An RNA of 177 nucleotides, treated with DMS and 2A3 and read out base by base. It was measured as part of the RMDB library OK2TRN. For DMS the reverse transcriptase was MarathonRT. Conditions: 150 mM KOAc, 10 mM MgCl2 and 150 mM bicine (pH 8.5), 24 C.
RNA sequence: GGGAACGACUCGAGUAGAGUCGAAAAAGUUCUGAGGCCGCUGCAGAAGCGUGAUGCCGUGGAAUAUCUGCUGGCGGCGUACCGUAUCGGAGUACGCAGAGGGUGCAGGCUGAUGAUGCAGAGCCGCUGCCUAAAAGCUAUUCGUAGCUUUUAGGCAAAAAGAAACAACAACAACAAC
Reactivity to DMS in 0.01 (KOAc 150mM, MgCl2 10mM, bicine 150mM(pH8.5), 24C), signal-to-noise 4, nucleotides 027 to 126: a140g010u000u000c010u000g010a150g000g020c000c010g010c020u000g010c060a040g020a110a130g010c040g000u000g010a110u010g010c040c030g020u000g020g010a100a080u010a100u000c040u000g020c020u010g040g010c030g000g010c000g030u010a010c050c030g020u000a120u010c130g000g020a120g030u010a020c060g010c030a080g010a110g000g000g000u000g000c050a090g000g020c030u000g010a100u000g000a110u010g010c030a080g000a240g000c030c020g030c180
Reactivity to 2A3 in 0.01 (KOAc 150mM, MgCl2 10mM, bicine 150mM(pH8.5), 24C), signal-to-noise 2, nucleotides 027 to 126: a000g070u070u030c050u040g010a110g030g060c040c030g040c070u010g000c020a010g030a180a010g040c070g050u080g040a110u150g040c050c010g030u060g010g070a150a050u110a080u160c040u060g020c010u070g060g020c020g010g000c000g010u010a000c000c030g020u080a090u170c080g070g000a140g080u010a000c040g000c010a000g010a050g100g080g020u080g050c030a040g060g000c030u040g030a110u080g010a020u090g050c000a000g000a010g050c040c000g000c080